This 207-nucleotide RNA was probed chemically with DMS and 2A3. DMS adducts were read by reverse transcription with MarathonRT. The reactions ran in a buffer of 150 mM KOAc, 10 mM MgCl2 and 150 mM bicine (pH 8.5), at 24 C.

RNA sequence: GGGAACGACUCGAGUAGAGUCGAAAACGGUUACGCGUUCUUUACCGUUAUCAAGGAAGGUACUCGGCCAUGCUAAGGGAAGCAUUAUUCCUUAGGCGCAUGUCGCCGCCAGCAUGGUGUGAGGGGAAAAAGUAUGCUGGGUUCGCCCAGCAUACAAGGUAAUAAUGCCCUUCGGGGCAUUAUUACCAAAAGAAACAACAACAACAAC
Reactivity to DMS in 0.01 (KOAc 150mM, MgCl2 10mM, bicine 150mM(pH8.5), 24C), signal-to-noise 2, nucleotides 027 to 156: c020g000g040u000u000a040c100g000c100g000u000u010c060u000u000u010a090c010c020g010u010u000a040u000c030a030a110g000g000a080a060g000g010u010a110c000u000c030g010g010c000c000a010u000g010c010u000a190a160g000g000g000a010a080g000c170a160u000u000a170u000u010c010c010u000u000a110g020g010c050g030c020a080u000g010u010c010g030c010c020g060c080c090a050g010c020a020u000g000g030u000g020u020g020a030g000g020g010g020a050a050a110a120a160g020u000a000u000g000c020u000g010g020g030u000u000c300g000c000c010c010a020g000c020a000u000a000c020a010a020
Reactivity to 2A3 in 0.01 (KOAc 150mM, MgCl2 10mM, bicine 150mM(pH8.5), 24C), signal-to-noise 3, nucleotides 027 to 156: c020g000g040u060u060a060c110g010c080g110u110u020c030u030u100u030a050c000c020g020u040u060a080u210c070a040a040g100g050a080a040g090g010u080a030c010u010c020g030g000c000c000a000u000g000c000u020a030a060g020g000g010a010a020g010c050a150u060u100a140u250u070c000c000u040u070a030g000g000c010g000c020a100u190g090u270c000g000c040c010g020c040c010a000g000c000a000u020g000g020u090g160u130g000a010g010g010g000g070a000a040a050a000a050g000u020a000u000g000c000u000g030g000g000u020u030c070g080c010c000c000a000g000c000a000u000a000c000a000a000